Structure probing data (DMS and 2A3) for a 177-nucleotide construct. The reactions ran in a buffer of 150 mM KOAc, 10 mM MgCl2 and 150 mM bicine (pH 8.5), at 24 C.
RNA sequence: GGGAACGACUCGAGUAGAGUCGAAAAGACGGAUUCUUCGGAAUCCGUCAAAGUGACGGUGAAAAAUGGCCAAUGCGCCAGCUACCACCGACAGAGGGCGCAAAACUGGAGUGUUCGCACUCCAGAACAACAUGUCCAUGUUCGCAUGGACAUGUUGAAAAGAAACAACAACAACAAC
Reactivity to DMS in 0.01 (KOAc 150mM, MgCl2 10mM, bicine 150mM(pH8.5), 24C), signal-to-noise 5, nucleotides 027 to 126: g000a010c000g010g020a010u000u010c000u000u010c230g030g000a020a000u000c000c000g020u000c000a000a020a080g020u010g020a130c020g010g020u000g020a030a050a060a110a130u000g010g010c000c020a130a110u010g020c070g020c000c000a110g010c040u000a150c100c010a030c020c010g000a110c090a050g000a080g000g010g010c060g010c030a050a050a070a190c000u000g000g000a020g010u000g020u000u030c180g020c010a010c000u010c000c000a010g010a050a080
Reactivity to 2A3 in 0.01 (KOAc 150mM, MgCl2 10mM, bicine 150mM(pH8.5), 24C), signal-to-noise 3, nucleotides 027 to 126: g010a000c010g000g000a010u010u010c010u050u070c210g050g000a010a000u000c000c000g000u000c000a000a010a000g010u020g040a040c010g010g000u030g060a100a030a010a020a150u220g030g000c020c020a090a190u100g020c060g000c010c000a000g000c000u030a060c040c050a000c000c000g010a000c010a010g130a060g020g010g000c020g000c010a030a050a000a040c000u000g000g000a000g000u010g020u070u130c160g040c080a000c000u000c000c000a000g000a000a000
High 2A3 reactivity points to a flexible backbone, as in loops and unpaired stretches. Source: RMDB library M2PK50, as collected in RNAgym. For 2A3 the reverse transcriptase was SuperScript II with manganese. The 2A3 profile rests on 7,258 reads. For DMS the reverse transcriptase was MarathonRT.